[RMDB]
RNA sequence: GGGAACGACUCGAGUAGAGUCGAAAACUAAAAAUGAACGAGAAGUUCAGAGAUAUCAGAGCAAUGAUACCAGAUCAAAUUACAGACUAUAAUGAGGCGGUAGUGGUCGUGAAUACCUCAUACUACCCACAGCUCUUUAUGCCUGUAGGGCGCGUCAAUGUCCACCUAAGUUCGCUUAGGUGGACAUAAAAGAAACAACAACAACAAC
Reactivity to 2A3 in 0.01 (KOAc 150mM, MgCl2 10mM, bicine 150mM(pH8.5), 24C), signal-to-noise 1, nucleotides 027 to 156: c020u010a000a000a060a030a100u040g010a000a020c020g020a030g030a300a050g040u030u020c010a020g000a010g010a020u040a070u200c050a030g000a000g170c110a000a120u070g030a020u070a150c000c000a020g010a070u050c070a120a000a000u110u050a000c090a090g050a020c000u050a030u060a100a010u090g050a000g000g080c010g000g080u090a070g000u000g090g000u030c110g000u060g010a030a050u230a090c000c020u000c000a000u040a040c040u000a000c200c000c000a130c100a070g020c000u040c000u010u110u000a010u100g020c000c000u000g050u130a000g000g070g000c010g000c030g100u000c030a040